Chemical mapping of a 177-nucleotide RNA with DMS and 2A3. For 2A3, 409 sequencing reads were counted. Conditions: 150 mM KOAc, 10 mM MgCl2 and 150 mM bicine (pH 8.5), 24 C. For DMS, 1,832 sequencing reads were counted.

[RMDB]
RNA sequence: GGGAACGACUCGAGUAGAGUCGAAAAUAAUUGCGGUUUCAGUUUACUAAAGAUUGUAAUCGCAUCGCCGUCUACGAUUAAAUUUUGAUGCGGUUGUAUAUUUUGUAGUAGGAAUGUAAUGGCAUUAAACACGGGAGUGUUUCGACACUCCCGUGUUAAAAGAAACAACAACAACAAC
Reactivity to DMS in 0.01 (KOAc 150mM, MgCl2 10mM, bicine 150mM(pH8.5), 24C), signal-to-noise 1, nucleotides 027 to 126: u130a080a080u050u020g000c280g010g010u020u000u000c000a070g000u050u010u030a040c070u020a020a040a010g000a000u000u000g000u000a000a000u000c000g000c010a020u000c010g000c130c100g000u010c080u000a040c200g010a180u100u050a050a080a150u030u050u060u020g000a000u000g010c000g000g000u010u000g000u000a000u030a020u000u000u000u000g020u000a040g040u000a060g030g000a120a060u000g000u010a030a010u020g010g000c000a050u000u010a070
Reactivity to 2A3 in 0.01 (KOAc 150mM, MgCl2 10mM, bicine 150mM(pH8.5), 24C), signal-to-noise 1, nucleotides 027 to 126: u170a000a040u040u110g000c000g160g060u030u010u020c000a020g130u180u140u000a090c090u160a020a040a000g040a000u010u000g010u000a000a000u000c000g000c000a000u000c000g030c070c010g120u110c050u230a030c070g080a070u160u300a020a070a060u230u220u240u290g020a030u000g030c000g000g000u000u050g020u010a060u000a020u260u020u000u060g060u000a010g000u000a030g000g090a050a000u030g030u020a070a010u040g090g060c000a010u000u070a090